Chemical mapping of a 177-nucleotide RNA with 2A3.
Values cover nucleotides 27 to 126.

RNA sequence: GGGAACGACUCGAGUAGAGUCGAAAAGCUCUGAGAGACAGAUCGAACAACAAAGAGAGAUCAAAAAUCUUAGGGGAGAGAACGAAUCUGUCGUCUUCUCUAGGACAUUGUCGAUCAGAUGUCCAAAGACCUUUCAUUGGUUCGCCAAUGAAAGGUCAAAAGAAACAACAACAACAAC
Reactivity to 2A3 in 0.01 (KOAc 150mM, MgCl2 10mM, bicine 150mM(pH8.5), 24C), signal-to-noise 1, nucleotides 027 to 126: g010c010u060c000u000g000a010g000a000g000a000c000a010g000a000u000c000g010a010a070c000a050a000c020a020a270a050g040a000g010a000g000a000u000c000a000a000a000a000a000u010c000u000u000a000g000g000g000g000a000g000a000g050a080a020c050g000a050a220u090c070u140g210u030c030g090u000c010u000u000c000u030c020u000a000g020g000a000c020a100u080u060g030u010c010g000a010u000c000a000g000a010u080g010u000c000c020a000a080a040